Chemical mapping of a 207-nucleotide RNA with DMS and 2A3. The RNA was probed in 150 mM KOAc, 10 mM MgCl2 and 150 mM bicine (pH 8.5) at 24 C.
RNA sequence: GGGAACGACUCGAGUAGAGUCGAAAAGUAUGGAUGCCACCGUGACGGCUCAAUCACACAAGUGCCAACAAUAACGAGGCGCUCGCUAUUGCUGCGUAACUGACGGCCUGACGGUCUGACGUUACAAAAAACGAAAAGUGGUUCGCCACUUUUCGAACUAGAAAUAACACUUCGGUGUUAUUUCUAGAAAAGAAACAACAACAACAAC
Reactivity to DMS in 0.01 (KOAc 150mM, MgCl2 10mM, bicine 150mM(pH8.5), 24C), signal-to-noise 2, nucleotides 027 to 156: g050u000a120u000g000g030a140u000g020c010c030a090c010c080g060u000g000a120c110g010g000c000u000c060a070a120u000c010a080c020a100c050a070a090g040u000g070c030c030a060a040c040a060a060u000a080a090c060g010a110g020g070c150g060c020u000c030g000c000u000a020u000u000g000c000u000g020c030g000u000a050a050c000u000g000a300c300g020g000c000c030u000g030a170c120g030g000u000c010u020g000a300c170g020u020u010a090c030a000a030a050a080a060a150c000g010a000a000a010a020g020u000g030g000u000u010c300g040c010c000a000c000u000u000u000u010c010g000a010a110
Reactivity to 2A3 in 0.01 (KOAc 150mM, MgCl2 10mM, bicine 150mM(pH8.5), 24C), signal-to-noise 5, nucleotides 027 to 156: g070u060a060u170g040g040a040u070g020c040c040a030c030c000g010u010g050a080c070g020g000c010u040c100a090a130u150c030a040c020a020c010a120a050g010u010g060c030c010a050a010c020a060a110u100a070a030c050g020a050g230g070c100g050c080u020c030g010c010u030a030u070u110g030c030u040g020c040g030u020a060a020c000u020g050a020c020g010g010c000c020u120g080a040c060g010g000u000c010u000g000a010c030g010u020u040a030c010a000a090a000a010a000a000c000g000a000a000a000a000g000u000g030g040u050u040c170g020c030c000a000c000u000u010u010u000c000g000a010a010